Record summary
An RNA of 177 nucleotides, treated with 2A3 and DMS and read out base by base. The reactions ran in a buffer of 150 mM KOAc, 10 mM MgCl2 and 150 mM bicine (pH 8.5), at 24 C. For 2A3 the reverse transcriptase was SuperScript II with manganese.

[RMDB]
RNA sequence: GGGAACGACUCGAGUAGAGUCGAAAACGUGGACGCGGUAGUGUUCGGCACCGGCUGCGCUGAUCCGCUCUACCGUCGUGCGGUCCGGGUAUCCAUGGGACACGCGUUAUUGGUGCCAUAUGCACGCUGCGUCGGAAGAUUUCGAUCUUCCGACGCAAAAAGAAACAACAACAACAAC
Reactivity to 2A3 in 0.01 (KOAc 150mM, MgCl2 10mM, bicine 150mM(pH8.5), 24C), signal-to-noise 1, nucleotides 027 to 126: c050g080u160g030g040a030c040g000c040g030g040u050a110g020u120g050u220u220c040g000g010c020a020c080c060g060g050c060u050g000c030g050c040u060g050a130u040c000c010g040c010u000c000u010a020c060c000g060u170c060g060u120g000c040g030g000u030c040c040g000g000g060u050a110u050c100c040a180u160g060g000g020a010c050a030c120g000c030g000u000u030a090u030u070g030g000u000g020c020c000a040u090a040u090g040c010a000c060g050c100
Reactivity to DMS in 0.01 (KOAc 150mM, MgCl2 10mM, bicine 150mM(pH8.5), 24C), signal-to-noise 1, nucleotides 027 to 126: c080g020u020g010g010a070c030g000c030g020g000u000a030g030u010g010u000u010c130g010g030c110a050c060c020g000g020c060u010g000c150g010c030u000g000a110u000c010c040g060c020u000c010u000a000c040c010g000u000c090g020u000g000c030g000g030u010c040c050g010g010g010u000a080u010c050c070a080u040g010g000g000a040c040a110c120g000c040g000u000u010a130u010u010g000g000u000g000c010c070a120u000a080u000g010c030a040c020g000c160